Annotation
Chemical mapping of a 207-nucleotide RNA with 2A3 and DMS. The 2A3 profile rests on 3,929 reads. The reactions ran in a buffer of 150 mM KOAc, 10 mM MgCl2 and 150 mM bicine (pH 8.5), at 24 C. High 2A3 reactivity points to a flexible backbone, as in loops and unpaired stretches.
RNA sequence: GGGAACGACUCGAGUAGAGUCGAAAAGUCAUGCCUUCGGGCAUGACAGGUACCGAGAGGUACCAAAUAGCGUACAGCAGACUCCGCCUGUACGCUAAGUAAGUGUGUGUUCAAUAGGGUCCAAUUGAACACACACUCCGUUGGACCAUGAGUGUGAAUACCAUAAAUCAUUCGUGAUUUAUGGUAUAAAAGAAACAACAACAACAAC
Reactivity to 2A3 in 0.01 (KOAc 150mM, MgCl2 10mM, bicine 150mM(pH8.5), 24C), signal-to-noise 3, nucleotides 027 to 156: g010u000c000a010u010g010c000c000u040u060c230g050g020g010c000a000u000g000a000c010a000g000g010u000a010c010c020g030a020g000a010g050g000u000a000c010c000a010a070a050u080a000g000c000g010u000a000c000a010g010c020a030g060a220c080u060c080c060g080c020c000u000g000u000a010c000g000c010u000a040a020g100u090a040a010g010u000g000u000g000u000g000u000u000c010a020a000u040a130g060g070g040u040c030c000a030a020u010u000g010a000a000c000a000c000a000c000a010c000u000c000c020g030u030u050g030g040a060c030c040a110u150g030a050g160u090g030u040g060a050
Reactivity to DMS in 0.01 (KOAc 150mM, MgCl2 10mM, bicine 150mM(pH8.5), 24C), signal-to-noise 2, nucleotides 027 to 156: g000u020c000a030u000g010c020c010u010u000c300g060g010g010c000a010u010g000a000c020a050g040g000u000a000c020c000g000a300g000a300g000g000u010a020c000c010a000a040a110u000a000g000c000g020u000a020c000a030g020c030a120g010a090c070u000c020c030g000c200c020u010g000u000a010c010g000c000u000a000a050g040u010a020a030g040u000g030u000g020u000g020u000u000c020a020a060u000a050g010g030g020u000c060c040a120a250u000u000g000a020a030c000a010c010a000c000a010c000u000c030c050g040u000u000g000g000a060c040c040a040u000g000a120g000u000g010u000g020a200
It was measured as part of the RMDB library OK3TST.